[RMDB]
RNA sequence: GGGAACGACUCGAGUAGAGUCGAAAAGGGGUCGCAGUGGGAACGAUGUUGUCAGACGGGGUGGCUGAAGCCUCCACGGCCACUUACGUCUUGGAUUUACAUCGGGAACACUGCGACGGAGGCACCCAAAAGUCAGUAACGUUCGCGUUACUGACAAGACACAUUUGUUCUUCGGAACAAAUGUGUCAAAAGAAACAACAACAACAAC
Reactivity to 2A3 in 0.01 (KOAc 150mM, MgCl2 10mM, bicine 150mM(pH8.5), 24C), signal-to-noise 2, nucleotides 027 to 156: g170g000g050g000u010c000g020c000a000g010u010g000g010g000a050a030c000g010a000u000g020u010u040g010u050c060a020g010a000c010g000g000g010g000u000g000g010c000u000g010a110a010g020c000c010u000c010c010a010c010g010g000c000c000a010c020u020u130a240c000g000u000c000u020u180g110g010a010u190u040u140a000c000a000u000c000g000g030g000a000a000c000a000c000u000g030c010g000a010c000g000g000a000g000g030c000a070c020c010c000a070a140a020a020g010u000c000a000g000u010a010a000c010g030u070u090c300g040c000g110u000u040a000c020u020g000a000c000a000a000
Chemical mapping of a 207-nucleotide RNA with 2A3. It was measured as part of the RMDB library RNAMAK. 2A3 adducts were read by reverse transcription with SuperScript II with manganese. Conditions: 150 mM KOAc, 10 mM MgCl2 and 150 mM bicine (pH 8.5), 24 C.